[RMDB]
RNA sequence: GGGAACGACUCGAGUAGAGUCGAAAAUGCUCUCUGAUUCGCUUUAAUAAUAUUUUUUAUUCUAGGUACACUACUCGCUAUACCUUCUUGCAUAUCCAAAACUAAUAGCGCCGUUUUUCGAGACAUCCCAGAUAUACUUAUUCGUAAGUAUAUCUGGAAAAGAAACAACAACAACAAC
Reactivity to DMS in 0.01 (KOAc 150mM, MgCl2 10mM, bicine 150mM(pH8.5), 24C), signal-to-noise 5, nucleotides 027 to 126: u000g010c060u000c020u000c040u010g000a140u000u000c040g000c020u010u010u010a060a100u000a080a070u010a020u000u010u010u000u000u010a040u020u010c040u010a060g000g010u000a050c030a060c040u000a040c040u000c020g020c060u010a080u000a040c060c030u000u000c060u000u000g010c060a070u000a060u010c050c040a050a070a070a110c130u010a050a100u000a080g020c050g020c100c060g010u000u000u000u000u000c050g000a100g010a080c120a060u010c090
Reactivity to 2A3 in 0.01 (KOAc 150mM, MgCl2 10mM, bicine 150mM(pH8.5), 24C), signal-to-noise 6, nucleotides 027 to 126: u030g010c000u000c000u010c020u050g040a120u080u020c020g010c030u110u110u090a110a040u140a120a050u050a300u190u110u060u030u040u080a080u100u070c030u050a020g040g030u050a020c020a020c050u080a040c010u020c010g020c010u030a020u030a140c010c000u040u040c020u030u050g030c020a050u030a040u130c040c020a070a020a060a050c040u080a090a090u060a100g040c020g020c040c020g020u030u010u010u050u110c030g010a020g010a020c010a030u050c030
An RNA of 177 nucleotides, treated with DMS and 2A3 and read out base by base. For 2A3 the reverse transcriptase was SuperScript II with manganese. The RNA was probed in 150 mM KOAc, 10 mM MgCl2 and 150 mM bicine (pH 8.5) at 24 C. DMS adducts were read by reverse transcription with MarathonRT. For 2A3, 8,666 sequencing reads were counted. It was measured as part of the RMDB library OK2TST.